[RMDB]
RNA sequence: GGGAACGACUCGAGUAGAGUCGAAAACAACUCCAAGUUCUCGAGUUGAUCAUUGUUUGUAUUCUUGAGACAUUAUUUGGGGACGAGAUGUUUUGUUGACUCGAUAUAAGAAGGGGCUUUAUGGAAGAUCAGCCAAUAGUUUCGACUAUUGGCUGAUAAAAGAAACAACAACAACAAC
Reactivity to 2A3 in 0.01 (KOAc 150mM, MgCl2 10mM, bicine 150mM(pH8.5), 24C), signal-to-noise 4, nucleotides 027 to 126: c020a030a020c000u000c020c010a040a050g040u190u010c010u030c010g030a040g030u050u060g090a140u080c060a100u000u210g180u280u080u110g100u070a120u010u060c010u040u030g030a020g000a010c020a030u030u090a040u040u090u040g010g000g000g010a010c070g030a020g000a040u060g060u040u030u040u000g060u070u000g010a040c000u010c010g020a020u000a010u030a180a050g080a050a050g030g000g000g000c010u060u110u040a070u060g040g000a020a000g030
Reactivity to DMS in 0.01 (KOAc 150mM, MgCl2 10mM, bicine 150mM(pH8.5), 24C), signal-to-noise 4, nucleotides 027 to 126: c080a080a180c030u010c010c080a060a090g010u040u010c000u000c020g000a040g010u010u000g000a140u040c100a150u000u030g010u020u020u020g010u010a090u000u000c000u000u000g000a100g020a030c160a120u020u010a120u020u000u010g020g010g010g000a080c130g010a090g010a080u010g000u010u010u000u010g020u000u010g000a060c060u000c010g000a080u020a080u010a040a030g030a110a040g010g000g000g020c050u000u010u020a050u010g020g020a090a120g010

Conditions: 150 mM KOAc, 10 mM MgCl2 and 150 mM bicine (pH 8.5), 24 C. An RNA of 177 nucleotides, treated with 2A3 and DMS and read out base by base. It was measured as part of the RMDB libraries RFM100 and RFMREP. Values cover nucleotides 27 to 126.